[RMDB]
RNA sequence: GGGAACGACUCGAGUAGAGUCGAAAACUUAAUUGGAGUCAACGCCGGGAACCUUACCGGGGGCGACAGCAGGAUGAAGGUCAGGCUGAAGACCUUACCUGACGCGCUGAGAGGAGGUGCAUGGCCGUGACGUCUAGAUGUUCGCAUCUAGACGUCAAAAAGAAACAACAACAACAAC
Reactivity to DMS in 0.01 (KOAc 150mM, MgCl2 10mM, bicine 150mM(pH8.5), 24C), signal-to-noise 2, nucleotides 027 to 126: c080u000u010a110a160u020u020g000g020a090g000u010c030a150a290c150g000c000c010g070g000g000a240a120c090c030u000u000a050c050c020g010g020g010g010g010c140g000a060c060a050g000c010a020g010g030a120u000g010a030a000g000g010u000c090a100g000g040c130u000g000a120a060g000a060c020c020u000u000a020c010c000u000g000a110c100g020c030g000c000u000g010a240g000a130g000g000a060g000g000u000g000c140a030u000g000g020c030c140g000
Reactivity to 2A3 in 0.01 (KOAc 150mM, MgCl2 10mM, bicine 150mM(pH8.5), 24C), signal-to-noise 1, nucleotides 027 to 126: c020u090u140a070a090u180u110g150g010a030g100u050c040a030a060c060g000c030c010g090g000g020a050a090c000c050u060u080a170c050c040g040g000g000g030g000c000g010a100c020a000g000c000a000g010g110a070u110g220a110a000g000g000u040c020a030g120g050c050u250g090a110a010g000a080c010c000u010u080a010c010c000u000g120a190c050g010c040g000c070u060g020a110g020a060g070g060a030g010g070u040g000c060a110u100g020g000c020c010g080